[RMDB]
RNA sequence: GGGAACGACUCGAGUAGAGUCGAAAAUAUUAGACACACCACCUCUGCUUGCAUGUGGUACUCCCAUUUCAGUGAAGUAUAAAAUCCUAAAAGUACAACUUUUGUUGUUCUUUUGUGAGUAGAGGUGUAACUCACAAUGUUUCGACAUUGUGAGUUAAAAAGAAACAACAACAACAAC
Reactivity to DMS in 0.01 (KOAc 150mM, MgCl2 10mM, bicine 150mM(pH8.5), 24C), signal-to-noise 5, nucleotides 027 to 126: u040a080u040u020a070g020a140c150a090c130a110c280c000a020c000c000u000c000u010g000c000u010u010g010c010a020u040g010u020g000g000u010a060c030u000c040c000c020a150u020u040u040c200a090g010u050g010a050a020g020u010a050u020a060a050a120a110u030c010c010u000a030a030a010a000g010u000a000c010a000a000c010u010u040u010u040g010u000u000g000u000u000c000u000u020u000u010g010u000g000a020g020u000a010g000a020g010g000u000g000
Reactivity to 2A3 in 0.01 (KOAc 150mM, MgCl2 10mM, bicine 150mM(pH8.5), 24C), signal-to-noise 6, nucleotides 027 to 126: u240a040u150u170a050g090a030c050a000c020a020c080c050a010c000c000u010c000u000g000c010u020u000g010c010a060u140g080u110g210g000u010a020c010u030c020c070c020a100u070u230u080c030a030g040u020g240a100a020g050u030a040u040a210a110a030a060u070c040c040u080a080a050a000a000g030u030a010c010a010a010c030u060u160u300u300g010u010u000g000u000u030c000u010u060u030u020g000u000g010a000g000u010a010g000a000g000g000u010g020